An RNA of 177 nucleotides, treated with DMS and 2A3 and read out base by base.
The DMS profile rests on 22,493 reads.
Conditions: 150 mM KOAc, 10 mM MgCl2 and 150 mM bicine (pH 8.5), 24 C.

RNA sequence: GGGAACGACUCGAGUAGAGUCGAAAAGGCGCUCUGGCCAUCGUGGUGGCGGGCGCCGUCGCCUUUGUCGCCCAACAGGACGGCCAGGGCCCGCGCCGCGACCGGGUUAACUGGCAGCCGCUCAGCGAUUUACUGACCUAUUCGUAGGUCAGUAAAUAAAAGAAACAACAACAACAAC
Reactivity to DMS in 0.01 (KOAc 150mM, MgCl2 10mM, bicine 150mM(pH8.5), 24C), signal-to-noise 6, nucleotides 027 to 126: g000g000c060g000c010u000c040u010g020g010c000c010a070u000c050g030u020g020g020u000g000g020c020g010g000g010c020g020c070c110g010u010c040g000c010c010u000u020u050g010u000c030g000c030c010c030a160a110c150a110g010g010a040c060g010g000c010c070a020g010g000g000c010c010c020g010c100g000c040c050g000c060g000a070c080c050g000g000g000u010u010a080a130c050u010g000g000c040a110g010c040c030g000c050u020c070a090g010c080g000
Reactivity to 2A3 in 0.01 (KOAc 150mM, MgCl2 10mM, bicine 150mM(pH8.5), 24C), signal-to-noise 8, nucleotides 027 to 126: g020g000c030g000c050u040c040u100g130g020c020c000a020u040c080g120u140g090g020u020g050g030c010g000g010g000c010g010c020c010g000u030c010g010c000c000u070u100u160g060u040c030g010c010c050c000a060a080c060a070g080g080a060c020g040g000c010c010a040g030g000g000c000c000c000g010c020g000c010c030g040c030g030a050c020c000g030g000g000u080u100a190a090c010u020g030g000c010a020g030c010c020g010c040u050c050a050g030c030g050
About this RNA:
2A3 is a SHAPE reagent: it acylates the 2'-hydroxyl of flexible nucleotides of all four kinds.